[RMDB]
RNA sequence: GGGAACGACUCGAGUAGAGUCGAAAAGCGCCUCGACUGUGAUCCGAGCGGUACGCGCACGAUCAGUACCGGCCUGAUCACGGCCGGAUCUGAGGUACCACGAUCCGUACCUGGCCACGUACGCGCAUGGUGUCACGUAUUUCGAUACGUGACACCAAAAAGAAACAACAACAACAAC
Reactivity to DMS in 0.01 (KOAc 150mM, MgCl2 10mM, bicine 150mM(pH8.5), 24C), signal-to-noise 2, nucleotides 027 to 126: g040c100g030c020c020u000c070g000a040c090u000g030u020g010a020u000c050c070g000a150g050c050g010g000u000a050c030g030c110g000c020a090c140g000a110u000c050a090g000u000a300c010c000g010g010c030c000u000g040a060u010c170a090c130g000g040c010c000g000g000a110u000c000u030g010a050g040g000u000a030c040c020a100c060g000a100u000c050c080g060u000a040c000c020u000g010g010c140c030a060c070g010u000a020c100g020c040g000c080a190
Reactivity to 2A3 in 0.01 (KOAc 150mM, MgCl2 10mM, bicine 150mM(pH8.5), 24C), signal-to-noise 2, nucleotides 027 to 126: g040c060g010c010c040u050c050g000a090c060u100g030u120g110a050u000c030c020g040a020g090c100g010g020u020a000c030g000c030g000c110a040c100g050a110u060c010a040g020u070a110c030c000g110g070c010c010u190g120a300u170c090a000c100g000g000c000c000g020g000a030u000c010u050g020a020g030g050u040a030c010c060a080c100g040a060u090c060c030g000u030a010c000c040u020g040g020c030c040a050c030g060u070a020c060g010c030g000c070a060

Structure probing data (DMS and 2A3) for a 177-nucleotide construct. It was measured as part of the RMDB library OK2TRN. Values cover nucleotides 27 to 126. The DMS profile rests on 1,818 reads. Conditions: 150 mM KOAc, 10 mM MgCl2 and 150 mM bicine (pH 8.5), 24 C. For DMS the reverse transcriptase was MarathonRT.